[RMDB]
RNA sequence: GGGAACGACUCGAGUAGAGUCGAAAAGAGCGCGUAUUUCGGAGCAUGUGUUUCGGGGGCAGGCAUGGCUACAUAAAGCUAGAGGAGUGGGUCGAAGUGGGGCGUAAAGCAAGGACGGUCCAAGGGCGGAUGGUAUAUGGUUCGCCAUAUACCAUCCAAAAGAAACAACAACAACAAC
Reactivity to DMS in 0.01 (KOAc 150mM, MgCl2 10mM, bicine 150mM(pH8.5), 24C), signal-to-noise 1, nucleotides 027 to 126: g010a080g060c060g020c050g030u000a100u000u010u000c050g050g010a090g020c020a120u000g020u000g000u000u000u000c040g000g010g040g000g020c050a050g000g010c030a110u000g000g030c040u020a080c160a100u010a110a100a060g020c020u000a040g000a100g020g000a100g020u020g000g000g010u000c160g010a070a060g030u000g030g000g000g000c030g010u010a000a060a110g000c100a050a100g000g000a090c060g020g000u000c000c070a030a100g010g000g020c230

Structure probing data (DMS) for a 177-nucleotide construct. DMS (dimethyl sulfate) methylates the pairing face of unpaired adenines and cytosines. DMS adducts were read by reverse transcription with MarathonRT. The reactions ran in a buffer of 150 mM KOAc, 10 mM MgCl2 and 150 mM bicine (pH 8.5), at 24 C. For DMS, 936 sequencing reads were counted. Source: RMDB library VIROID, as collected in RNAgym.